An RNA of 177 nucleotides, treated with 2A3 and read out base by base. For 2A3, 396 sequencing reads were counted. The reactions ran in a buffer of 150 mM KOAc, 10 mM MgCl2 and 150 mM bicine (pH 8.5), at 24 C. The data come from the RNA Mapping Database (RMDB), library OK1LIB.
[RMDB]
RNA sequence: GGGAACGACUCGAGUAGAGUCGAAAAAGCUGCAGAGGCACUGCCAGGGGGUGGCCGCCACAGCCGCAGCUCCCUCAAUACUGUGGUGUAGACGGCCUGGCCUGUACCCCAACGGUCUGGGAGCACCGGCGUGUCCCCUAUUCGUAGGGGACACGCCAAAAGAAACAACAACAACAAC
Reactivity to 2A3 in 0.01 (KOAc 150mM, MgCl2 10mM, bicine 150mM(pH8.5), 24C), signal-to-noise 1, nucleotides 027 to 126: a000g010c070u030g000c020a000g010a070g180g060c080a040c010u040g120c050c110a050g000g020g000g070g090u110g010g030c050c060g000c000c000a070c040a020g040c000c000g020c000a000g000c030u080c010c000c000u030c020a110a130u250a090c000u000g040u000g070g000u120g180u120a060g070a070c070g030g000c040c030u050g060g040c040c000u070g000u110a080c010c010c000c010a000a070c010g000g050u050c030u030g000g000g010a030g000c010a050c010c080